[RMDB]
RNA sequence: GGGAACGACUCGAGUAGAGUCGAAAACAAACAAAGUAGGAAGAUAAGAGGGAGCUGCAAAUCCCAAUGAGCUAUUACAUCAUACACAUUAGCAAGCUACAAUAAAACCUAGAAAGUAAUGAGUCUUGGCAAGGGUGUGGAGACUCUGAACCAUCUACUCAUUAGCCAGUUUCGACUGGCUAAUGAGAAAAGAAACAACAACAACAAC
Reactivity to 2A3 in 0.01 (KOAc 150mM, MgCl2 10mM, bicine 150mM(pH8.5), 24C), signal-to-noise 1, nucleotides 027 to 156: c030a000a100a000c010a060a040a000g040u030a040g030g020a120a060g100a110u110a040a100g040a100g000g000g060a090g050c150u220g000c090a050a050a060u020c070c000c000a000a050u050g030a000g050c010u050a060u000u070a090c040a040u140c050a060u300a100c070a000c010a020u090u000a060g020c040a010a010g030c000u070a010c020a030a070u100a040a080a000a000c030c030u040a030g090a180a130a080g010u060a070a040u050g020a010g040u020c040u050u040g010g000c030a050a030g080g030g050u060g060u030g050g000a000g000a000c000u000c000u110g010a050a060c030c000a050u030c010u170a100